[RMDB]
RNA sequence: GGGAACGACUCGAGUAGAGUCGAAAAGAUAUGGAGUAUACCAAGCGAUCUACCCACCUCGGAAACGAGAGGAUCGAACUACUUGGGUACUCCUAAGUCAAAAGCAAUCCUCUUCGGAGGAUUGCAAGUCUCCAAGAGAGUUCGCUCUCUUGGAGACAAAAGAAACAACAACAACAAC
Reactivity to DMS in 0.01 (KOAc 150mM, MgCl2 10mM, bicine 150mM(pH8.5), 24C), signal-to-noise 1, nucleotides 027 to 126: g000a120u010a240u000g000g000a060g020u010a000u000a130c000c010a030a020g040c070g000a000u000c000u000a130c010c020c050a300c100c040u000c000g000g000a060a040a250c030g000a000g000a140g020g010a030u000c000g000a040a000c060u000a180c000u000u000g020g000g000u000a010c010u000c000c000u000a000a040g000u010c110a120a190a260a120g000c000a000a000u000c000c000u000c000u000u060c140g000g000a050g000g000a020u010u010g000c010a010a000
Reactivity to 2A3 in 0.01 (KOAc 150mM, MgCl2 10mM, bicine 150mM(pH8.5), 24C), signal-to-noise 1, nucleotides 027 to 126: g090a040u230a160u300g000g030a050g010u020a000u070a300c010c010a010a000g060c020g010a010u010c040u130a300c040c030c030a070c070c020u010c000g010g020a130a140a090c000g040a010g010a020g040g010a000u020c020g010a020a080c080u240a040c020u300u000g000g030g000u000a000c000u060c000c000u010a020a020g050u020c090a010a130a000a000g010c020a000a010u020c030c000u060c010u060u090c260g100g010a010g000g000a000u000u000g000c000a000a000
This 177-nucleotide RNA was probed chemically with DMS and 2A3.
2A3 adducts were read by reverse transcription with SuperScript II with manganese.
It was measured as part of the RMDB library TTRDEL.
The reactions ran in a buffer of 150 mM KOAc, 10 mM MgCl2 and 150 mM bicine (pH 8.5), at 24 C.
Reactivities are given for positions 27 through 126.